[RMDB]
An RNA of 177 nucleotides, treated with DMS and read out base by base. The data come from the RNA Mapping Database (RMDB), library RFMREP. The reactions ran in a buffer of 150 mM KOAc, 10 mM MgCl2 and 150 mM bicine (pH 8.5), at 24 C.
RNA sequence: GGGAACGACUCGAGUAGAGUCGAAAAUCCGAGUUGUAAUUUGUAGAACUGUUAUCCGCGCUGGACCAUGUACAAGUCUGUUGAAAAGCAGCAUCAUUGAAGGUGAAAAUCCUGUAGAUGAUAUGGAGUUGAAUAGAACGUUCGCGUUCUAUUCAACAAAAGAAACAACAACAACAAC
Reactivity to DMS in 0.01 (KOAc 150mM, MgCl2 10mM, bicine 150mM(pH8.5), 24C), signal-to-noise 2, nucleotides 027 to 126: u000c000c010g000a120g020u000u010g000u000a050a080u010u000u010g000u000a110g010a080a080c070u020g010u000u010a080u020c030c050g020c090g020c030u010g020g000a060c040c010a030u010g030u000a040c060a020a090g010u010c010u000g010u010u000g000a080a050a080a090g010c000a010g010c070a090u010c030a030u010u000g000a170a040g000g000u000g000a090a100a160a100u000c000c010u000g010u010a140g000a030u010g010a020u010a090u000g010g000a290